[RMDB]
RNA sequence: GGGAACGACUCGAGUAGAGUCGAAAAGAUAUGGACGACUAAGGACAACAGCAUGCCCGCAUCGGAAACGAUGCCCGCAUGACAUGUCUAUGUCGUCCUAAGUCAAAGACUGGGUUCGCCCAGUCAACCUGAAUCUUCAGUUCGCUGAAGAUUCAGGAAAAGAAACAACAACAACAAC
Reactivity to 2A3 in 0.01 (KOAc 150mM, MgCl2 10mM, bicine 150mM(pH8.5), 24C), signal-to-noise 2, nucleotides 027 to 126: g010a020u060a050u150g000g020a000c000g000a010c010u060a130a300g120g010a010c030a190a030c090a280g220c050a020u020g000c020c040c030g000c000a010u000c000g030g030a050a000a000c030g000a000u010g000c030c010c000g020c010a000u010g100a160c050a150u260g010u000c000u000a060u120g000u000c010g000u000c000c010u000a000a000g000u030c040a040a070a080g020a000c000u000g070g000g030u100u110c300g070c100c010c030a000g000u010c000a000a030
Reactivity to DMS in 0.01 (KOAc 150mM, MgCl2 10mM, bicine 150mM(pH8.5), 24C), signal-to-noise 2, nucleotides 027 to 126: g010a050u000a300u000g000g010a020c000g000a000c000u010a180a300g020g000a000c000a070a110c270a140g000c000a030u000g000c010c000c300g000c000a010u000c010g000g000a140a040a180c010g000a000u000g020c000c030c300g020c000a000u000g040a060c120a210u000g020u000c000u010a300u000g020u000c010g000u030c000c010u000a020a060g000u000c030a260a110a140g000a010c010u010g000g000g000u010u000c210g010c000c000c000a000g010u000c010a060a050